An RNA of 177 nucleotides, treated with DMS and 2A3 and read out base by base. As a SHAPE reagent, 2A3 marks flexible, mostly unpaired nucleotides at the ribose 2'-OH.
RNA sequence: GGGAACGACUCGAGUAGAGUCGAAAACAGAUUAUGGGAGGAUCUAUGAAUAUUCACAAAGGGAGGAUCUAUGAAUAUGCACACAUGUGGAGUAAGCUAACGUGUGCAGCAUGUCUCCCAUGUUCACGGGUUCAAUAGAGUUCGCUCUAUUGAACCCAAAAGAAACAACAACAACAAC
Reactivity to DMS in 0.01 (KOAc 150mM, MgCl2 10mM, bicine 150mM(pH8.5), 24C), signal-to-noise 1, nucleotides 027 to 126: c050a140g010a060u030u000a040u000g000g000g000a040g000g000a090u010c030u000a070u000g010a240a100u000a080u000u000c020a070c100a060a090a130g010g010g010a070g010g000a100u000c090u000a040u000g000a060a010u000a030u000g010c010a090c010a020c010a070u000g000u000g040g020a150g000u000a100a170g020c050u000a080a030c080g000u000g010u000g020c050a090g030c040a010u000g010u000c010u020c000c000c000a030u000g000u000u000c040a050c230
Reactivity to 2A3 in 0.01 (KOAc 150mM, MgCl2 10mM, bicine 150mM(pH8.5), 24C), signal-to-noise 2, nucleotides 027 to 126: c020a000g070a060u080u140a030u260g000g000g000a010g020g040a020u020c040u050a050u080g000a080a010u100a070u070u070c040a020c070a140a140a070g060g040g020a060g030g050a040u070c020u050a050u000g020a020a020u110a030u090g000c000a010c000a000c010a050u160g000u080g070g010a150g210u300a070a080g110c030u020a070a000c060g000u000g020u000g010c000a000g050c000a020u050g040u070c000u020c000c030c000a000u030g010u030u020c040a020c120
The reactions ran in a buffer of 150 mM KOAc, 10 mM MgCl2 and 150 mM bicine (pH 8.5), at 24 C. The 2A3 profile rests on 1,405 reads.